[RMDB]
RNA sequence: GGGAACGACUCGAGUAGAGUCGAAAAGAUAUGGAAGGAACUACGCUGAAACUAGCGUUGAAACAAAUUAGCUUAUCGGAAACGAUAAGCUAAUUUGUGGAGCUAGUACGCAGCGCCUUCCUAAGUCCGCUAAUAGAGCGUUCGCGCUCUAUUAGCGAAAAGAAACAACAACAACAAC
Reactivity to DMS in 0.01 (KOAc 150mM, MgCl2 10mM, bicine 150mM(pH8.5), 24C), signal-to-noise 1, nucleotides 027 to 126: g010a150u020a300u010g000g000a020a010g000g000a090a040c270u040a280c030g000c000u000g030a060a070a010c010u010a010g000c020g030u000u020g010a250a080a030c000a010a020a000u000u000a000g030c000u000u000a010u000c010g000g000a120a120a190c020g000a000u000a000a000g020c000u010a000a000u010u000u000g010u020g020g010a200g000c000u000a000g060u020a020c300g040c000a010g000c030g000c000c040u000u010c000c000u040a090a150g000u010c060